[RMDB]
RNA sequence: GGGAACGACUCGAGUAGAGUCGAAAAUUGAGGUUUGCGAUGACGUGACACUUCCAGAAAACCAACCUGGUCAUAUGGUUCAAAUAGAGGAUGAUGGUAAGAACUACAUGUUCUUCCGUUUUAAAAAGGAUGAGAACAUUUAUUAUACACCAAUGUCAGACUUAAUCUUUUUCGAAAGAUUAAGUCUAAAAGAAACAACAACAACAAC
Reactivity to DMS in 0.01 (KOAc 150mM, MgCl2 10mM, bicine 150mM(pH8.5), 24C), signal-to-noise 3, nucleotides 027 to 156: u000u000g010a070g030g020u000u000u000g020c050g010a100u010g010a090c050g010u010g010a120c090a070c080u000u010c010c020a110g010a090a090a080a100c040c040a060a100c080c030u000g010g000u000c040a090u000a100u010g000g010u010u000c040a050a100a160u000a100g010a100g020g020a080u000g020a060u000g020g020u000a030a070g010a050a060c050u000a100c140a080u010g020u000u010c000u000u000c020c000g010u000u020u000u000a030a090a100a080a090g000g010a050u010g000a070g010a070a030c010a030u000u000u000a060u010u000a150u010a080c020a060c030c020a030a130u000g000u000c080
Reactivity to 2A3 in 0.01 (KOAc 150mM, MgCl2 10mM, bicine 150mM(pH8.5), 24C), signal-to-noise 5, nucleotides 027 to 156: u090u090g020a040g030g040u050u060u120g030c060g030a040u060g030a060c050g040u040g030a020c020a020c100u060u000c020c020a030g100a050a100a020a020c020c000a020a030c010c020u020g020g020u040c020a040u050a050u180g050g000u010u030c020a040a110a080u090a110g080a020g040g010a030u060g000a020u020g020g010u060a040a040g010a040a010c010u100a030c060a060u110g000u000u010c000u000u000c000c010g000u030u040u090u190a050a100a030a010a010g030g000a040u080g030a020g010a040a010c010a000u050u060u040a100u080u080a070u030a060c060a010c010c020a060a050u100g050u100c050
This 207-nucleotide RNA was probed chemically with DMS and 2A3. 2A3 adducts were read by reverse transcription with SuperScript II with manganese. The reactions ran in a buffer of 150 mM KOAc, 10 mM MgCl2 and 150 mM bicine (pH 8.5), at 24 C.